[RMDB]
This 177-nucleotide RNA was probed chemically with 2A3 and DMS. The reactions ran in a buffer of 150 mM KOAc, 10 mM MgCl2 and 150 mM bicine (pH 8.5), at 24 C. For 2A3 the reverse transcriptase was SuperScript II with manganese. For DMS, 11,975 sequencing reads were counted. For DMS the reverse transcriptase was MarathonRT. It was measured as part of the RMDB library OK1LIB.

RNA sequence: GGGAACGACUCGAGUAGAGUCGAAAAAGAGGCCUGAAAGACGCGAAGCCGGGAAGGCGCCGCACUCUCUCUGUGGUGCAUGCAGAAGGUCCUGUGGCGGAGAGCGAGGCGAACGUCACAGGCUUAGCCCUUUUACUCAUUUCGAUGAGUAAAAGGGAAAAGAAACAACAACAACAAC
Reactivity to 2A3 in 0.01 (KOAc 150mM, MgCl2 10mM, bicine 150mM(pH8.5), 24C), signal-to-noise 9, nucleotides 027 to 126: a000g100a030g010g020c010c000u040g060a160a090a030g050a010c020g020c030g130a110a020g010c020c020g010g020g040a080a040g100g030c010g000c010c000g020c010a030c010u030c000u000c000u000c010u020g030u040g080g080u150g090c060a080u180g000c010a020g010a150a030g060g010u130c000c060u040g010u030g020g010c010g040g030a070g020a010g080c070g030a060g060g020c030g020a050a010c000g000u000c000a000c000a090g000g000c000u010u020a010g000
Reactivity to DMS in 0.01 (KOAc 150mM, MgCl2 10mM, bicine 150mM(pH8.5), 24C), signal-to-noise 5, nucleotides 027 to 126: a060g010a090g000g010c020c000u020g000a100a110a090g010a070c030g000c030g010a170a240g000c020c010g030g000g000a110a090g010g000c020g020c050c000g010c020a040c100u010c020u000c030u010c040u010g010u010g000g030u030g010c080a070u020g000c090a050g010a090a060g000g010u020c000c100u030g020u000g000g010c000g000g010a100g010a200g020c070g020a150g010g000c020g010a140a160c000g020u000c000a030c010a010g000g000c030u000u010a040g000